[RMDB]
RNA sequence: GGGAACGACUCGAGUAGAGUCGAAAAGAUAUGGAGAAUCUGGAGUCGACGUAUCGGAAACGAUACGACGACGAUGAAAGAGUUCUCCUAAGUCAAACCAUCCAGAAAGUUCGCUUUCUGGAUGGAAGUUUGUCUUAAACUUCGGUUUAAGACAAACAAAAGAAACAACAACAACAAC
Reactivity to DMS in 0.01 (KOAc 150mM, MgCl2 10mM, bicine 150mM(pH8.5), 24C), signal-to-noise 3, nucleotides 027 to 126: g010a010u000a030u000g020g000a010g020a020a070u000c010u000g020g010a010g010u000c000g020a120c000g020u010a000u000c000g010g010a010a010a030c000g020a010u000a000c000g010a070c010g040a020c010g010a100u010g010a100a210a040g000a020g000u000u000c000u000c000c010u000a000a090g000u000c000a120a140a260c010c010a000u000c010c010a010g010a020a000a010g010u000u020c240g000c000u000u000u000c000u000g000g000a020u000g010g010a010a030
Reactivity to 2A3 in 0.01 (KOAc 150mM, MgCl2 10mM, bicine 150mM(pH8.5), 24C), signal-to-noise 1, nucleotides 027 to 126: g000a000u010a020u050g000g010a000g000a010a000u000c000u000g040g010a020g020u000c000g010a010c000g000u010a000u000c000g010g000a030a010a000c000g000a010u020a030c020g010a020c010g000a000c010g010a090u000g010a030a000a000g030a010g180u070u010c000u000c000c000u000a010a000g010u010c000a000a020a220c010c010a000u000c000c000a000g000a000a000a010g020u100u180c280g040c150u000u010u010c000u000g010g000a000u010g010g010a010a000